The data come from the RNA Mapping Database (RMDB), library OK3TST. This 207-nucleotide RNA was probed chemically with 2A3. The 2A3 profile rests on 416 reads. The RNA was probed in 150 mM KOAc, 10 mM MgCl2 and 150 mM bicine (pH 8.5) at 24 C. Values cover nucleotides 27 to 156.

RNA sequence: GGGAACGACUCGAGUAGAGUCGAAAAUAAGAUUUGUGUUGUCUGUAAAACUCCAAUCGAUUCUGCAUUGGUUGUUGAAACAGACAAAGGUCCUGUACAUCCUGGGCCUUGCUAUAAUUACAUUAAAGAACUACCAGUUUCAGAAAGUUCGGAAGAACGGAGACCAAUAGUUCGCUAUUGGUCUCCGAAAAGAAACAACAACAACAAC
Reactivity to 2A3 in 0.01 (KOAc 150mM, MgCl2 10mM, bicine 150mM(pH8.5), 24C), signal-to-noise 1, nucleotides 027 to 156: u110a010a010g140a180u040u110u110g160u060g000u020u110g000u040c030u000g000u000a000a000a000a110c000u000c000c000a000a000u010c040g060a070u300u080c070u180g070c030a000u000u000g080g020u280u060g020u000u000g020a100a080a000c000a000g020a000c000a010a010a010g010g000u000c000c000u000g000u040a140c030a110u080c040c000u010g000g010g000c000c010u000u010g000c010u010a020u100a300a070u100u110a070c020a010u170u120a080a100a050g020a090a030c000u040a070c070c030a000g020u040u010u040c020a010g180a040a110a050g010u050u040c080g000g060a070a040g060a180a000